Overview
An RNA of 207 nucleotides, treated with 2A3 and read out base by base. For 2A3, 1,449 sequencing reads were counted. Values cover nucleotides 27 to 156. For 2A3 the reverse transcriptase was SuperScript II with manganese. It was measured as part of the RMDB library OK3TST. The RNA was probed in 150 mM KOAc, 10 mM MgCl2 and 150 mM bicine (pH 8.5) at 24 C. High 2A3 reactivity points to a flexible backbone, as in loops and unpaired stretches.
RNA sequence: GGGAACGACUCGAGUAGAGUCGAAAACACCUCCUCCGUCGCGGUUUCCAGCCAGGUGACCGCGAUGUCGACCUUCGGGGAGUGCAGCAGCCGCAGUGCCGCCUCCACGUCCUGGUUCGGCUCCCGGCCGUCGGCCAGGCCACGAUCGGUGAGCUCGGCAUGCAUAGAUUUUCGAAUCUAUGCAUGCAAAAGAAACAACAACAACAAC
Reactivity to 2A3 in 0.01 (KOAc 150mM, MgCl2 10mM, bicine 150mM(pH8.5), 24C), signal-to-noise 2, nucleotides 027 to 156: c120a140c020c020u020c020c000u040c010c000g020u000c000g020c000g040g000u020u110u050c050c070a050g030c030c020a040g040g000u020g000a000c010c000g000c000g020a010u010g000u020c060g100a110c010c080u140u100c060g000g010g010g040a070g050u220g030c040a060g000c010a020g030c030c070g170c130a050g090u050g050c000c000g030c000c000u000c020c010a070c030g060u010c030c020u000g010g000u060u090c010g010g050c010u020c010c000c000g020g000c030c000g050u100c140g000g050c060c080a140g100g030c000c000a010c000g050a000u050c030g010g020u210g070a000g020c090u110c120g010